[RMDB]
RNA sequence: GGGAACGACUCGAGUAGAGUCGAAAAAUCCUCAGGUACUUGUCGGACACUGUCACCAAGUCUCCCGUGGACCUAAAGUCCGACAGGAGAGCGUCCCUGAUGGCCGUCAUCUGAGUGAGCCUCGACGGUAUCCUUAGGAAUUCGUUCCUAAGGAUACAAAAGAAACAACAACAACAAC
Reactivity to 2A3 in 0.01 (KOAc 150mM, MgCl2 10mM, bicine 150mM(pH8.5), 24C), signal-to-noise 9, nucleotides 027 to 126: a000u010c000c000u000c010a010g040g010u040a080c020u050u040g010u020c010g000g010a010c020a030c130u120g040u140c030a040c120c040a100a070g070u010c040u060c040c060c050g050u140g030g020a060c020c040u150a160a070a010g000u000c000c010g020a010c000a000g010g020a070g000a020g020c020g010u020c020c000c030u120g190a180u230g030g000c010c010g020u040c010a030u010c020u010g010a010g030u080g020a010g000c010c000u020c040g080a050c060g030
Reactivity to DMS in 0.01 (KOAc 150mM, MgCl2 10mM, bicine 150mM(pH8.5), 24C), signal-to-noise 9, nucleotides 027 to 126: a110u000c010c000u000c020a030g010g010u000a250c040u000u000g010u000c030g010g010a030c010a160c170u000g010u000c110a090c070c090a070a120g000u010c070u000c030c050c090g030u000g000g010a070c090c090u000a060a120a180g010u000c000c000g010a030c040a010g000g000a120g000a120g010c040g000u000c020c020c080u010g010a110u000g010g010c050c010g000u000c070a040u000c020u000g000a030g010u010g010a230g000c010c010u000c110g020a100c220g010
This 177-nucleotide RNA was probed chemically with 2A3 and DMS.
It was measured as part of the RMDB library OK2TST.
The reactions ran in a buffer of 150 mM KOAc, 10 mM MgCl2 and 150 mM bicine (pH 8.5), at 24 C.